[RMDB]
RNA sequence: GGGAACGACUCGAGUAGAGUCGAAAAGCGGCCAUCUCUGGGGCUGGCUCCUGUAUGGUUUUUGAGAAUGAUUUUUCUGAGUUUGACAGCACUCAAAAUAAUUUCUCUCUUGGCCUUGAGUGUGUUACUCCUCAAUACUCUUCGGAGUAUUGAGGAGAAAAGAAACAACAACAACAAC
Reactivity to DMS in 0.01 (KOAc 150mM, MgCl2 10mM, bicine 150mM(pH8.5), 24C), signal-to-noise 1, nucleotides 027 to 126: g020c070g000g000c010c020a080u010c100u000c150u000g000g050g000g010c050u000g020g020c050u010c000c020u000g020u010a070u000g000g010u000u000u000u000u020g010a090g000a040a070u000g010a070u020u010u000u010u010c060u000g000a040g000u000u010u020g010a050c120a080g030c160a050c000u000c020a040a020a020a040u010a030a060u020u000u000c080u000c000u000c040u010u000g000g000c010c020u000u020g000a100g020u000g020u010g010u000u000a120